Notes
Structure probing data (2A3) for a 207-nucleotide construct. It was measured as part of the RMDB library OK3TST. Values cover nucleotides 27 to 156. The reactions ran in a buffer of 150 mM KOAc, 10 mM MgCl2 and 150 mM bicine (pH 8.5), at 24 C.
RNA sequence: GGGAACGACUCGAGUAGAGUCGAAAAAUCCAUGAUGAUGAUUUAUUAAUCAGGAUCUUUUAUAAAGAUCAAAGAACAGCAGAAGAUAGGGAAAUAUACACUGGCAAUGCUCAAACAAGAUUAUGUCUUUAUCCCAUAGAAAAAACAUAUAAAGCAACCUCUUAUAUUAGUUCGCUAAUAUAAGAGGAAAAGAAACAACAACAACAAC
Reactivity to 2A3 in 0.01 (KOAc 150mM, MgCl2 10mM, bicine 150mM(pH8.5), 24C), signal-to-noise 1, nucleotides 027 to 156: a000u000c020c020a030u090g020a020u010g000a000u000g010a000u000u050u250a110u100u150a140a050u070c000a000g090g000a010u000c010u000u040u000u010a110u020a070a010a010g010a090u000c050a040a000a030g030a040a030c060a000g280c000a030g010a120a000g010a070u060a030g120g050g150a020a020a220u190a060u110a000c030a030c210u110g020g010c080a100a030u000g040c060u060c150a090a090a120c010a100a000g030a150u050u100a070u200g050u100c030u020u000u120a120u010c050c000c000a020u180a030g190a020a140a010a000a020a000c020a020u300a140u210a070a300a000g240c000a000a000